This 207-nucleotide RNA was probed chemically with 2A3 and DMS.
RNA sequence: GGGAACGACUCGAGUAGAGUCGAAAAGCUGGCUAUUUACUUUAGUGCUGGGAUCACAUUCACUUACAGGGGAGCGUUCGUUUCAUCCUUCAUCAUCCUAGCAUUGGUCUAUUUUCGGCGAUAUAAACACGGAGGAUUCUCAGUUACGAACUUCACCUCUUCGCUAAUUAUUCGUAAUUAGCGAAGAAAAAGAAACAACAACAACAAC
Reactivity to 2A3 in 0.01 (KOAc 150mM, MgCl2 10mM, bicine 150mM(pH8.5), 24C), signal-to-noise 8, nucleotides 027 to 156: g200c090u040g030g010c030u040a090u170u230u120a130c060u220u180u260a040g010u030g010c010u010g010g030g000a030u080c050a030c050a220u250u200c070a080c140u080u220a070c080a060g000g000g010g010a020g010c050g050u070u070c020g000u030u130u080c080a110u060c020c000u090u070c020a110u050c010a010u010c030c010u000a010g000c010a020u030u130g010g000u010c010u050a060u020u030u010u020c020g010g010c000g020a010u010a010u040a150a150a000c100a030c120g030g000a000g000g010a010u070u020c030u020c040a030g020u040u060a030c070g020a090a030c000u070u090c060a070c080c010
Reactivity to DMS in 0.01 (KOAc 150mM, MgCl2 10mM, bicine 150mM(pH8.5), 24C), signal-to-noise 2, nucleotides 027 to 156: g020c080u000g030g040c050u000a100u000u000u000a050c070u010u010u000a070g030u020g000c020u000g020g000g020a080u000c110a060c090a110u000u000c040a050c040u000u000a110c100a140g000g020g040g020a040g000c140g020u000u000c030g000u000u000u010c020a120u000c050c010u020u000c030a070u010c080a110u000c010c010u000a060g020c020a050u000u010g010g010u000c010u000a130u010u000u000u000c030g020g020c040g020a180u010a090u010a080a060a080c050a080c060g020g020a060g020g000a110u000u000c040u000c030a100g010u010u000a050c050g010a050a060c010u000u000c040a060c060c040

For DMS, 5,817 sequencing reads were counted. For DMS the reverse transcriptase was MarathonRT. For 2A3, 5,986 sequencing reads were counted. As a SHAPE reagent, 2A3 marks flexible, mostly unpaired nucleotides at the ribose 2'-OH.